[RMDB]
Description: Chemical mapping of a 207-nucleotide RNA with DMS and 2A3.

RNA sequence: GGGAACGACUCGAGUAGAGUCGAAAAGAUCUGCGCCGAUCCGAAACGCUAGCAAACAGCCCGCAUCAUGUCGUCUCCUAACUUCGACGUGGUGAAAUACUUAGCUUAUGCGAGUAAGCCUGUUAGCAAUAGAUCAGAACGUUCGCGUUCUGAUCAACUAGUGUGUGAUGUUCGCAUCACACACUAGAAAAGAAACAACAACAACAAC
Reactivity to DMS in 0.01 (KOAc 150mM, MgCl2 10mM, bicine 150mM(pH8.5), 24C), signal-to-noise 2, nucleotides 027 to 156: g010a060u000c010u010g010c070g020c030c000g000a060u000c020c030g010a070a070a080c100g040c040u000a050g060c040a100a050a080c070a240g000c020c020c000g030c030a050u000c020a050u010g000u000c010g010u000c070u000c080c050u030a100a100c070u000u000c010g030a050c000g010u020g020g000u000g010a080a070a090u010a060c100u000u000a070g020c000u010u010a060u000g020c150g000a160g010u000a030a080g010c000c080u010g000u000u010a070g020c060a090a130u010a130g020a040u000c000a000g000a000a000c010g000u000u000c300g040c040g010u000u010c000u000g000a000u010c010a020a110
Reactivity to 2A3 in 0.01 (KOAc 150mM, MgCl2 10mM, bicine 150mM(pH8.5), 24C), signal-to-noise 7, nucleotides 027 to 156: g020a050u010c020u100g040c060g030c060c050g020a040u030c040c040g050a090a040a010c080g000c030u040a020g030c050a060a060a070c040a040g050c000c010c020g020c000a010u000c000a000u010g000u020c000g020u000c060u120c060c090u140a160a160c080u080u040c020g010a010c000g010u000g000g000u020g010a030a030a000u110a020c050u060u080a030g010c010u140u110a030u300g060c030g010a020g050u020a040a010g020c000c040u030g010u040u050a010g010c030a070a140u040a200g000a000u000c000a000g000a000a010c000g010u040u070c280g000c000g080u000u000c030u000g000a000u000c000a000a000

Notes:
Reactivities are given for positions 27 through 156. It was measured as part of the RMDB library M2RFPK. The RNA was probed in 150 mM KOAc, 10 mM MgCl2 and 150 mM bicine (pH 8.5) at 24 C. For DMS the reverse transcriptase was MarathonRT.